[RMDB]
RNA sequence: GGGAACGACUCGAGUAGAGUCGAAAAAUGAGGAGAUUGCGGAACAUUUUGGUCUUUCUCUGCCUGAAUACAACGCAUUAGCACUUAAAGUAUCGGGAUCUGCAAUGCUUUCGCUCAAUGAAACCUCAGCUCUCGAAAAUUUCGAUUUUCGAGAGCUAAAAGAAACAACAACAACAAC
Reactivity to DMS in 0.01 (KOAc 150mM, MgCl2 10mM, bicine 150mM(pH8.5), 24C), signal-to-noise 1, nucleotides 027 to 126: a130u000g020a040g000g020a080g010a080u010u000g020c070g040g000a080a080c070a080u000u010u000u000g000g000u020c040u000u000u010c040u010c030u020g000c020c020u000g010a090a040u000a060c150a150a120c220g000c020a090u000u000a080g040c040a020c130u010u000a050a080a100g000u010a020u010c020g030g000g000a040u000c020u000g000c030a010a040u000g020c110u010u000u000c090g020c020u010c020a090a110u000g000a100a090a130c050c020u000c060
Reactivity to 2A3 in 0.01 (KOAc 150mM, MgCl2 10mM, bicine 150mM(pH8.5), 24C), signal-to-noise 1, nucleotides 027 to 126: a020u000g010a010g010g010a050g010a030u050u070g030c010g020g010a040a020c000a080u050u070u100u060g000g000u010c020u020u160u000c050u010c040u040g110c020c030u000g050a070a020u080a060c070a130a050c090g000c020a050u140u140a060g000c030a040c080u130u200a160a050a030g010u070a020u060c030g060g090g000a100u050c000u070g040c000a000a060u010g050c010u020u090u010c050g000c040u060c030a050a070u100g070a160a020a070c000c010u060c010
Overview:
An RNA of 177 nucleotides, treated with DMS and 2A3 and read out base by base. For DMS, 981 sequencing reads were counted. The data come from the RNA Mapping Database (RMDB), library OK2TRN. The 2A3 profile rests on 927 reads.